[RMDB]
RNA sequence: GGGAACGACUCGAGUAGAGUCGAAAAGAUAUGGAUUUAGGGAGUCGACCAUCGGAAACGAUGGCACGACUUUGAUCUAACUGUCCUAAGUCAAACCACCUUUUCGAGUUCGCUCGAAAAGGUGGAACGAUGCAUAACAGUUCGCUGUUAUGCAUCGAAAAGAAACAACAACAACAAC
Reactivity to DMS in 0.01 (KOAc 150mM, MgCl2 10mM, bicine 150mM(pH8.5), 24C), signal-to-noise 4, nucleotides 027 to 126: g000a070u000a200u000g010g010a020u000u010u000a020g000g020g000a010g010u000c000g000a300c000c000a010u010c000g000g000a070a080a180c000g020a000u010g000g000c040a020c000g010a020c000u010u000u000g000a060u000c030u000a020a100c300u010g010u000c000c010u000a030a110g010u000c040a090a110a260c000c000a010c000c000u000u000u000u000c000g010a020g010u000u020c220g000c010u010c000g000a000a000a000a000g000g020u000g000g000a010a020
Reactivity to 2A3 in 0.01 (KOAc 150mM, MgCl2 10mM, bicine 150mM(pH8.5), 24C), signal-to-noise 3, nucleotides 027 to 126: g030a010u110a060u190g020g010a010u040u020u040a090g060g030g000a030g030u000c000g000a040c020c000a010u010c000g010g020a100a020a030c010g010a010u030g040g000c120a100c060g000a000c000u030u050u040g020a030u020c010u010a000a100c090u190g040u060c010c000u050a100a050g040u030c040a010a050a100c020c000a000c000c000u000u000u000u000c000g000a000g010u060u100c220g080c100u000c000g000a000a000a010a000g030g000u010g010g000a000a000